[RMDB]
RNA sequence: GGGAACGACUCGAGUAGAGUCGAAAAAGUAAACCAUAUUCUGUUUAUAUACGGACGUUGAGCCGGUGGGGUCCUGGUUCCAUUCCACGCGGAAUAACAGAUUUAAGGGGACCUUAACUGAGCAAUACACGUAAUCGGAUUUCGAUCCGAUUACGUGAAAAGAAACAACAACAACAAC
Reactivity to DMS in 0.01 (KOAc 150mM, MgCl2 10mM, bicine 150mM(pH8.5), 24C), signal-to-noise 2, nucleotides 027 to 126: a160g000u010a060a080a100c030c060a200u060a000u000u010c000u030g000u000u000u070a010u000a050u070a100c090g000g000a020c280g080u000u000g000a180g030c030c000g000g080u000g010g000g000g020u000c000c070u000g010g020u020u000c100c080a060u020u000c030c030a170c300g010c140g000g020a030a010u060a000a030c010a050g010a080u010u020u000a160a100g050g050g000g000a040c000c040u000u000a040a030c000u000g030a160g010c050a140a080u030a060
Reactivity to 2A3 in 0.01 (KOAc 150mM, MgCl2 10mM, bicine 150mM(pH8.5), 24C), signal-to-noise 2, nucleotides 027 to 126: a000g190u150a080a100a070c080c090a140u150a100u270u090c010u010g010u010u260u000a220u000a070u050a120c020g020g080a000c020g100u050u000g070a000g000c010c000g050g000u010g000g000g030g000u000c000c030u060g100g010u030u020c090c000a010u020u040c040c080a150c170g200c180g000g040a030a000u130a020a020c010a030g090a210u040u180u300a060a050g090g000g020g030a020c000c000u000u040a130a030c020u020g080a020g090c020a050a000u140a060